Chemical mapping of a 177-nucleotide RNA with DMS and 2A3.
RNA sequence: GGGAACGACUCGAGUAGAGUCGAAAAGCCGUGCUCGAGAGGGAGCAGAAAAUGCAGAGCUAUCCCGUCGUUUCGCUAAACAAAUGCGUAACGACAAAUUGCGUUACAUACGCAAUCCUCUAAUGAACAUUACUGCAGAUUUCGAUCUGCAGUAAUGAAAAGAAACAACAACAACAAC
Reactivity to DMS in 0.01 (KOAc 150mM, MgCl2 10mM, bicine 150mM(pH8.5), 24C), signal-to-noise 7, nucleotides 027 to 126: g020c020c070g020u000g010c010u000c010g010a040g010a030g010g010g000a050g010c010a080g010a090a070a110a070u000g010c130a070g010a110g020c040u000a160u000c010c010c010g020u000c000g000u000u000u010c000g020c000u010a030a120a130c300a080a080a070u000g000c000g000u000a000a010c000g010a000c010a020a040a040u000u000g000c000g000u000u010a080c260a110u010a020c010g020c000a010a020u000c020c010u000c020u010a090a120u010g000a070a180
Reactivity to 2A3 in 0.01 (KOAc 150mM, MgCl2 10mM, bicine 150mM(pH8.5), 24C), signal-to-noise 9, nucleotides 027 to 126: g010c010c020g090u040g010c000u010c020g090a060g000a010g050g050g010a010g000c020a010g140a020a180a010a010u220g010c070a020g030a040g070c010u030a060u060c000c000c010g000u010c000g000u000u000u020c010g000c010u070a170a230a150c080a050a130a040u140g000c000g000u010a000a000c010g010a000c020a000a110a010u010u010g000c000g010u020u100a170c070a130u240a040c040g000c000a000a020u030c000c000u030c010u070a120a140u160g060a070a010

The reactions ran in a buffer of 150 mM KOAc, 10 mM MgCl2 and 150 mM bicine (pH 8.5), at 24 C.